[RMDB]
RNA sequence: GGGAACGACUCGAGUAGAGUCGAAAAUACCGCAGGCCUGCGGUGCGGCAGUGUGGAGACCUGCCGUAAGCCGUGUUGUUUUGGCAACCGGGAGAAAGCGUAUGCGGAGGCAGCGCUUUCAGGGUCUAAAAGUAUGGGAUCUUCGGAUCCCAUACAACGAACUUGAACAGUUCGCUGUUCAAGUUCGAAAAGAAACAACAACAACAAC
Reactivity to 2A3 in 0.01 (KOAc 150mM, MgCl2 10mM, bicine 150mM(pH8.5), 24C), signal-to-noise 2, nucleotides 027 to 156: u100a000c000c000g000c010a010g000g000c000c010u020g010c020g000g000u000g000c020g010g000c000a020g000u050g030u120g300g080a050g030a070c000c000u010g000c000c000g010u010a010a000g010c000c010g100u120g010u090u010g020u000u150u050u140g140g000c000a000a000c010c000g000g000g000a010g010a000a000a000g000c000g000u070a300u190g010c040g030g130a030g300g070c000a000g020c000g000c000u000u000u000c000a000g000g010g010u000c000u000a040a040a040a040g010u010a000u000g010g000g010a000u010c020u040u050c170g100g000a000u000c010c000c000a000u000a000c000a000a000
An RNA of 207 nucleotides, treated with 2A3 and read out base by base. Reactivities are given for positions 27 through 156. The reactions ran in a buffer of 150 mM KOAc, 10 mM MgCl2 and 150 mM bicine (pH 8.5), at 24 C. For 2A3 the reverse transcriptase was SuperScript II with manganese.